[RMDB]
RNA sequence: GGGAACGACUCGAGUAGAGUCGAAAAGGUGGAGUGAUUUGUCUGCUUAAUUGCGAUAACGAACGAGACCUUAACCUGCUAAAUAGCCCGGUCCGCUUUGGCGGGCCGCUGGCUUCUUAGAGGGACUACUUCCUCCAGGAUUCGUCCUGGAGGAAGUAAAAGAAACAACAACAACAAC
Reactivity to 2A3 in 0.01 (KOAc 150mM, MgCl2 10mM, bicine 150mM(pH8.5), 24C), signal-to-noise 4, nucleotides 027 to 126: g010g020u010g000g020a050g010u020g030a140u020u010u020g020u030c080u180g040c040u090u140a120a080u300u090g000c010g000a000u020a020a010c030g020a030a010c000g010a040g020a010c000c000u000u000a020a050c010c000u050g150c000u040a020a070a090u070a050g000c000c000c010g000g000u000c000c010g050c060u110u110u300g170g000c000g000g000g010c000c000g000c000u010g000g000c000u010u010c000u000u010a010g010a030g010g000g030a010c040u010
Reactivity to DMS in 0.01 (KOAc 150mM, MgCl2 10mM, bicine 150mM(pH8.5), 24C), signal-to-noise 2, nucleotides 027 to 126: g000g000u000g060g000a300g000u000g000a210u000u010u040g010u000c030u080g040c010u000u030a100a240u020u000g060c010g000a010u000a000a000c040g010a280a020c010g000a300g010a030c000c000u000u000a200a070c000c000u000g000c010u000a000a020a030u010a000g010c010c030c010g020g000u010c010c000g000c000u000u130u100g000g000c000g030g030g010c000c000g090c110u030g030g010c000u000u000c020u000u030a020g000a030g000g000g010a120c050u000